[RMDB]
RNA sequence: GGGAACGACUCGAGUAGAGUCGAAAAUUUCUCCCCCCGCCUGAGGGAGAAGGAAGAGACUAAUCAGGCUAGCUGCACGGAGGCCUGUCUUUGGGCUGAAGUGCUAGCGAAAUACGAAUACAAAGACUACGCUCGUAGAAGCGUAAGUGUCGUUAUCGUGACGUAUAGACUUCGGUCUAUACGUCACAAAAGAAACAACAACAACAAC
Reactivity to 2A3 in 0.01 (KOAc 150mM, MgCl2 10mM, bicine 150mM(pH8.5), 24C), signal-to-noise 2, nucleotides 027 to 156: u010u020u000c010u000c000c000c000c000c010c010g020c030c010u010g000a000g020g020g020a020g000a060a020g130g080a120a050g040a020g040a070c060u100a030a020u040c000a000g000g010c000u000a000g000c000u010g030c010a000c030g010g030a020g040g010c000c000u000g000u010c000u000u020u040g010g000g000c010u020g000a010a000g000u000g000c000u000a000g000c000g000a000a000a000u230a090c080g080a010a000u020a020c020a030a000a010g000a000c000u000a000c000g000c010u000c030g300u250a090g110a210a010g020c010g000u010a010a120g130u120g030u080c090g040u030u060a140u150c040